[RMDB]
RNA sequence: GGGAACGACUCGAGUAGAGUCGAAAACGCUGGGCAGAUGAAAUUACUAGGAGGUUGGCACAACCUUACUGAAGCGCGCACGGUAAGUAGCCAACUACCCACCCUAGUAUGAGUAAUCUGCCUGUGCUGAAGCGCGCACGGCAACCGAAAGGUGCGACAAAUCUGAAGAGUUCGCUCUUCAGAUUUGAAAAGAAACAACAACAACAAC
Reactivity to 2A3 in 0.01 (KOAc 150mM, MgCl2 10mM, bicine 150mM(pH8.5), 24C), signal-to-noise 2, nucleotides 027 to 156: c080g020c010u020g020g020g000c000a010g010a010u010g010a000a040a020u020u000a000c000u000a000g000g000a010g010g010u000u000g000g010c010a060c040a180a120c040c000u000u000a000c000u020g060a220a130g000c000g000c000g010c000a010c000g000g000u000a010a000g000u020a020g020c000c000a010a000c020u040a040c080c100c030a080c000c020c010u000a000g010u000a000u000g000a000g010u000a000a000u010c000u000g000c000c000u010g020u000g000c040u120g060a110a020g020c000g000c000g000c010a000c010g080g000c030a130a150c010c000g050a090a040a050g000g020u030g010c000g000a020
Reactivity to DMS in 0.01 (KOAc 150mM, MgCl2 10mM, bicine 150mM(pH8.5), 24C), signal-to-noise 2, nucleotides 027 to 156: c070g040c000u000g020g040g010c020a030g000a060u000g000a300a210a260u000u000a010c010u000a030g000g000a200g030g020u010u030g030g090c040a140c210a050a220c270c030u000u000a000c010u000g010a060a130g000c030g020c000g010c000a300c010g000g030u020a000a030g030u000a230g000c020c010a010a020c030u000a040c000c040c080a300c050c020c010u000a010g020u010a010u000g000a070g000u000a100a030u000c010u000g020c010c000u010g030u000g010c010u000g000a100a030g000c060g020c000g020c000a110c090g020g030c070a110a080c050c000g030a100a130a230g000g000u000g010c050g020a300